[RMDB]
RNA sequence: GGGAACGACUCGAGUAGAGUCGAAAAGCAUAGCGUCAAGUUGGUUGACCAGAAGUCUGGUUAGCAAACAGAGUUAAACCAAAAGGUUAGACGCACUCUGUGAAAAAGUACGAAAGUACAAAGAUAAUUAGCUGUUUCUAUUCGUAGAAACAGCUAAAAAAGAAACAACAACAACAAC
Reactivity to DMS in 0.01 (KOAc 150mM, MgCl2 10mM, bicine 150mM(pH8.5), 24C), signal-to-noise 2, nucleotides 027 to 126: g010c090a080u010a100g020c010g020u000c030a120a170g010u010u000g010g010u000u000g020a010c030c000a030g010a300a230g010u010c010u000g000g000u000u000a060g020c020a080a120a000c000a050g010a050g000u000u010a070a060a050c000c020a050a050a100a120g000g000u000u000a100g010a010c040g010c030a100c070u000c000u000g030u000g000a020a060a110a040a120g010u000a000c020g000a110a040a150g010u000a000c000a080a120a100g000a100u000a070a150

Chemical mapping of a 177-nucleotide RNA with DMS. For DMS the reverse transcriptase was MarathonRT. Values cover nucleotides 27 to 126.